[RMDB]
RNA sequence: GGGAACGACUCGAGUAGAGUCGAAAAGUAUUUGUCUUUCUGUGUCUGGCUUAUUUUGCUUAGCAUAGUGUCCUCGAUGGAGGACAUUUCUAAUAGGGGUAAUAGCAUUCACUUUACUUCUGAUCUAAUGUGUAAUCUCUUUGCUACAGGAAAAGAAGACUACUCACCAGUUCGCUGGUGAGUAGUCAAAAGAAACAACAACAACAAC
Reactivity to 2A3 in 0.01 (KOAc 150mM, MgCl2 10mM, bicine 150mM(pH8.5), 24C), signal-to-noise 1, nucleotides 027 to 156: g050u040a110u100u140u120g040u070c030u000u030u000c020u000g040u000g030u000c000u010g020g040c030u170u040a090u080u220u090u090g000c020u010u170a060g010c030a050u060a060g030u030g010u010c000c000u030c000g120a130u100g210g000a000g010g020a000c000a000u010u010u010c060u040a170a160u080a080g000g010g020g010u050a040a040u020a150g050c010a000u080u050c040a040c000u060u100u070a090c010u070u070c040u010g040a100u010c020u100a050a070u070g080u000g070u150a050a060u000c030u000c000u060u090u030g070c010u020a040c070a030g110g000a000a000a000a140g030a080a030